RNA sequence: GGGAACGACUCGAGUAGAGUCGAAAAGCGGAAGCUCAAGCUAAGCGUUCUAGUGGUUAUGAUCCUAAUGAUGAUGAAUACAAUCAGACUCUUCAAGAUCAACAAGAAGAUGAUGAGGAAGAUAUGGGAUUGAAGCAUGUUUCGACAUGCUUCAAUCAAAAGAAACAACAACAACAAC
Reactivity to DMS in 0.01 (KOAc 150mM, MgCl2 10mM, bicine 150mM(pH8.5), 24C), signal-to-noise 4, nucleotides 027 to 126: g010c030g010g020a150a160g000c000u010c100a100a140g020c040u000a060a070g030c050g000u010u000c020u000a100g040u000g010g010u000u000a090u000g000a060u000c000c020u010a080a100u010g000a080u000g010a100u010g000a090a090u010a110c160a120a160u010c030a030g010a300c190u000c010u000u000c050a040a180g000a060u030c140a050a150c160a050a160g000a030a050g010a040u000g010a150u000g000a090g000g010a090a110g000a080u010a070u000g010g020
Reactivity to 2A3 in 0.01 (KOAc 150mM, MgCl2 10mM, bicine 150mM(pH8.5), 24C), signal-to-noise 3, nucleotides 027 to 126: g070c010g030g040a050a000g010c020u050c100a100a050g020c060u120a040a000g040c050g050u000u000c020u030a080g050u050g090g030u110u090a100u170g080a070u010c000c010u110a200a040u150g100a030u030g000a000u030g060a130a030u150a210c060a020a010u020c020a010g030a090c020u000c000u040u060c030a060a060g010a240u080c040a020a140c030a160a070g100a050a000g030a030u060g000a000u040g010a040g050g020a020a030g010a030u120a140u260g160g060